[RMDB]
RNA sequence: GGGAACGACUCGAGUAGAGUCGAAAAGAUAUGGAUGGCGAAGAACACCCAGCGUUUGACGUCGGAAACGACCGAGCUGUGGUGGGAGCCAUCCUAAGUCAAAUCAUCGUGGUUCGCCACGAUGAAACGGUAUUUUUCGGUUCGCCGAAAAAUACCGAAAAGAAACAACAACAACAAC
Reactivity to DMS in 0.01 (KOAc 150mM, MgCl2 10mM, bicine 150mM(pH8.5), 24C), signal-to-noise 2, nucleotides 027 to 126: g000a030u000a300u040g000g010a000u010g000g000c000g000a180a140g000a160a300c010a000c000c000c000a040g020c000g040u000u020u000g000a120c300g000u040c000g020g010a070a110a080c000g010a000c000c000g030a000g000c000u000g040u010g030g010u010g000g000g020a150g010c010c000a010u000c000c000u000a030a080g000u010c040a060a100a130u000c010a000u030c040g060u000g000g000u000u030c220g000c000c000a000c030g010a010u000g000a000a100a080